[RMDB]
RNA sequence: GGGAACGACUCGAGUAGAGUCGAAAAAUACAGUACGAAAGUACAAAGAAGGAAUCAAACCGAGCAGUGAAAUGAUGGCUUCAGUCCAAAAUGGGCAAACACUGCAGACGGAGCCAAAGGCAAAUAAUACGUAGUUCCUAUUCGUAGGAACUACGUAAAAAGAAACAACAACAACAAC
Reactivity to DMS in 0.01 (KOAc 150mM, MgCl2 10mM, bicine 150mM(pH8.5), 24C), signal-to-noise 3, nucleotides 027 to 126: a090u000a090c200a170g010u000a020c030g010a150a110a160g010u000a000c010a050a130a120g010a090a130g000g010a060a050u020c110a070a080a090c030c040g020a080g010c010a020g000u000g010a100a090a050u000g010a120u010g000g000c010u020u000c050a090g000u010c010c030a020a070a060a120u010g000g010g020c080a170a100a090c020a030c030u000g000c020a080g000a080c040g000g000a090g000c020c010a030a090a090g010g000c090a020a060a040u000a050a150
Reactivity to 2A3 in 0.01 (KOAc 150mM, MgCl2 10mM, bicine 150mM(pH8.5), 24C), signal-to-noise 2, nucleotides 027 to 126: a000u150a010c030a020g040u000a000c000g030a180a030a010g020u010a020c000a010a060a000g140a040a030g070g020a060a070u150c060a110a010a070c030c010g010a010g050c010a000g030u060g050a080a190a150u100g080a040u060g020g000c010u120u130c080a050g030u010c000c010a060a150a050a150u130g020g000g000c000a000a050a000c010a000c010u020g000c000a000g040a040c010g000g000a020g000c000c030a080a020a070g090g000c060a070a000a100u150a080a050